Chemical mapping of a 170-nucleotide RNA with DMS and 2A3. The reactions ran in a buffer of 150 mM KOAc, 10 mM MgCl2 and 150 mM bicine (pH 8.5), at 24 C. Source: RMDB library 15KLIB, as collected in RNAgym. For 2A3, 8,367 sequencing reads were counted. DMS (dimethyl sulfate) methylates the pairing face of unpaired adenines and cytosines.
RNA sequence: GGGAACGACUCGAGUAGAGUCGAAAAUAAAGUUCUUAGGAACAAGGGUGUUGAUUAUACUAAGAAGUUUCUUACAGUUGACGGUGUGCAAUAUUAUUGCUACACGUCUAAGGACACUUUAGAUGAUUACGAUAGCUCUUCGGAGCUAUCAAAAGAAACAACAACAACAAC
Reactivity to DMS in 0.01 (KOAc 150mM, MgCl2 10mM, bicine 150mM(pH8.5), 24C), signal-to-noise 3, nucleotides 027 to 129: u070a040a120a150g000u000u020c000u000u000a100g040g010a090a020c070a050a040g100g060g000u050g010u000u000g030a120u030u030a080u040a110c200u040a070a090g040a040a040g070u000u000u000c000u010u070a000c280a130g010u000u000g020a020c030g030g020u030g080u030g050c000a000a000u030a070u070u000a030u000u000g000c000u070a030c000a000c010g000u020c010u020a020a050g010g000a050c090a120c000u010u010u000a040g010a140u000g010a100u040u010a000c200
Reactivity to 2A3 in 0.01 (KOAc 150mM, MgCl2 10mM, bicine 150mM(pH8.5), 24C), signal-to-noise 6, nucleotides 027 to 129: u140a010a070a010g000u000u010c010u060u060a100g070g110a040a030c030a060a100g110g000g030u070g000u020u030g020a120u050u140a050u070a120c040u040a000a120g040a070a030g010u000u020u020c020u050u050a100c070a150g030u090u060g130a010c040g050g060u060g040u010g050c000a020a030u120a110u300u110a070u030u070g010c000u030a020c070a000c040g000u010c010u020a010a000g010g010a010c010a020c070u010u030u040a040g020a110u150g010a020u040u090a040c020